[RMDB]
RNA sequence: GGGAACGACUCGAGUAGAGUCGAAAACUCACGACGUUCGCGUCGUGAGAAAUAAAUUCAGCGGUAAUUCGAGCGGAAAUAUUACCGCUGAUGCGCUCGAAAAAAGGGUAUCCUUCGGGAUACCCAACUCAUAUCUAACCUUCGGGUUAGAUAUGAGAAAAGAAACAACAACAACAAC
Reactivity to DMS in 0.01 (KOAc 150mM, MgCl2 10mM, bicine 150mM(pH8.5), 24C), signal-to-noise 4, nucleotides 027 to 126: c000u000c000a020c000g010a010c000g010u000u020c210g020c010g040u000c010g030u000g000a020g010a010a040a050u000a070a070a070u010u000c000a010g020c000g000g000u000a010a020u000u000c150g010a100g020c130g010g010a100a080a100u010a090u000u000a020c000c000g010c000u000g010a000u000g000c240g000c020u000c030g010a000a050a060a090a080a090g010g000g000u000a000u000c000c000u000u010c220g020g010g010a020u000a010c000c000c010a000a020
Reactivity to 2A3 in 0.01 (KOAc 150mM, MgCl2 10mM, bicine 150mM(pH8.5), 24C), signal-to-noise 5, nucleotides 027 to 126: c000u000c000a010c000g010a000c000g020u040u070c240g010c000g070u000c000g000u000g000a000g000a010a020a000u060a000a070a030u040u010c000a000g000c000g010g010u020a010a020u050u110c090g090a110g120c120g090g090a060a110a020u200a030u010u010a000c000c000g000c010u000g000a000u000g000c070g010c010u060c050g060a030a050a030a030a040a110g010g020g000u000a010u000c010c000u000u050c170g120g020g000a000u000a010c000c000c000a000a000

Annotation:
This 177-nucleotide RNA was probed chemically with DMS and 2A3. The data come from the RNA Mapping Database (RMDB), library M2PK50.